[RMDB]
RNA sequence: GGGAACGACUCGAGUAGAGUCGAAAAAGCGUGCUUAUCGAACUUGCCGAGAUGACCGCGAAGCAUUGAGUGAGAGUAUUUUCCCCCGGCGGCGAAAUCAGGCUCCAUCGCCUGGCGUGCAAGGUUUAAUUCACGCAUAGCAUUACGGCUCACAGAGCGAUGUUACCAGGUUCGCCUGGUAACAUCGAAAAGAAACAACAACAACAAC
Reactivity to DMS in 0.01 (KOAc 150mM, MgCl2 10mM, bicine 150mM(pH8.5), 24C), signal-to-noise 2, nucleotides 027 to 156: a210g040c030g010u010g020c130u010u020a050u000c030g010a050a050c030u000u000g000c040c000g040a170g000a170u020g000a040c030c000g020c040g000a100a080g000c050a190u000u080g020a170g010u010g010a070g020a200g010u010a130u000u000u000u000c010c010c020c010c070g000g000c000g020g000c020g030a030a070a070u010c010a040g020g030c010u000c050c290a130u030c240g000c000c010u000g000g000c050g000u020g060c050a050a060g010g010u040u020u010a050a130u000u000c020a040c070g000c010a170u000a080g000c090a100u000u000a070c030g010g000c000u030c010a090c040a130g000a100g000
Reactivity to 2A3 in 0.01 (KOAc 150mM, MgCl2 10mM, bicine 150mM(pH8.5), 24C), signal-to-noise 3, nucleotides 027 to 156: a000g020c000g020u020g000c030u090u060a060u190c060g000a020a010c000u000u010g000c010c010g080a030g030a140u080g050a100c000c010g000c010g020a070a070g040c130a160u130u220g070a070g050u100g040a050g030a000g060u170a130u060u150u030u070c000c010c000c060c000g040g000c000g020g010c040g040a070a040a010u060c010a000g030g000c040u090c180c040a130u100c020g010c000c010u000g010g000c020g080u120g010c020a000a010g050g000u030u070u110a030a050u040u040c000a000c030g000c040a020u060a020g040c010a000u000u050a030c010g030g010c000u000c000a010c000a010g020a020g030